[RMDB]
An RNA of 177 nucleotides, treated with 2A3 and DMS and read out base by base. For 2A3, 2,936 sequencing reads were counted. The RNA was probed in 150 mM KOAc, 10 mM MgCl2 and 150 mM bicine (pH 8.5) at 24 C.
RNA sequence: GGGAACGACUCGAGUAGAGUCGAAAAGAUUUGACGAUAAUGCUUGUGUGUUGAUCAAUAAGAAUGGUGAACCCUUGGGUACUAGAAUAUCGUCGGUGGUGGCCAAGGAAUUAAAGGAUUUAAACUAUGUAUACAGUUAAUUCGUUAACUGUAUACAAAAAGAAACAACAACAACAAC
Reactivity to 2A3 in 0.01 (KOAc 150mM, MgCl2 10mM, bicine 150mM(pH8.5), 24C), signal-to-noise 3, nucleotides 027 to 126: g070a030u080u120u150g020a010c010g010a000u050a150a120u220g030c030u120u060g020u030g020u020g030u130u070g050a030u050c030a050a040u100a120a060g150a090a040u050g080g000u030g060a060a050c010c000c000u020u010g020g010g070u020a020c020u030a040g050a130a090u090a020u100c060g030u040c030g010g030u040g010g000u010g040g050c010c020a000a010g010g030a020a020u110u110a100a060a060g110g020a050u120u140u270a120a100a050c040u040a040
Reactivity to DMS in 0.01 (KOAc 150mM, MgCl2 10mM, bicine 150mM(pH8.5), 24C), signal-to-noise 9, nucleotides 027 to 126: g000a100u000u000u000g020a030c010g030a040u000a080a090u010g010c080u000u010g020u010g020u010g010u000u000g010a080u000c030a050a090u010a100a100g010a090a100u000g010g010u000g000a060a060c090c010c010u000u000g000g000g000u000a030c040u000a100g010a100a100u000a040u000c030g010u000c020g000g010u000g000g010u000g000g000c020c020a020a040g000g010a090a080u000u010a050a070a120g000g000a120u000u000u010a050a060a090c090u010a100